[RMDB]
RNA sequence: GGGAACGACUCGAGUAGAGUCGAAAAAAAUUAUGGUCGCCGGCACGUAUGUGCUCACCGAGAAUGACACUCUUUCGCCGUCAACCGUGUCGGUAGUCUUGCACAUCAGGAAUCCGUCUGCGUUGAAUAUAAUAGUAUCAUUCGUGAUACUAUUAUAAAAAGAAACAACAACAACAAC
Reactivity to 2A3 in 0.01 (KOAc 150mM, MgCl2 10mM, bicine 150mM(pH8.5), 24C), signal-to-noise 5, nucleotides 027 to 126: a000a000a000u270u130a140u140g010g000u040c030g020c020c000g000g010c000a010c010g080u100a050u240g060u070g000c030u020c010a050c020c050g050a060g100a120a100u150g030a020c000a010c070u070c000u060u150u100c110g030c060c020g050u030c020a020a030c040c020g010u010g030u020c000g010g010u020a040g010u000c010u020u070g010c090a060c000a100u090c020a030g040g050a030a050u020c010c010g030u000c040u050g030c030g090u070u090g040a100a000
Reactivity to DMS in 0.01 (KOAc 150mM, MgCl2 10mM, bicine 150mM(pH8.5), 24C), signal-to-noise 9, nucleotides 027 to 126: a050a060a080u010u010a060u010g010g010u000c040g020c050c040g010g000c020a030c030g010u000a060u010g020u000g010c060u000c080a060c140c060g010a090g010a080a110u000g000a080c090a090c080u000c070u000u000u000c090g010c040c050g000u000c050a060a070c150c030g010u000g010u000c020g000g020u000a040g010u000c030u000u000g010c080a060c090a060u000c050a050g010g010a060a070u000c030c020g010u000c030u000g010c100g010u000u000g000a080a110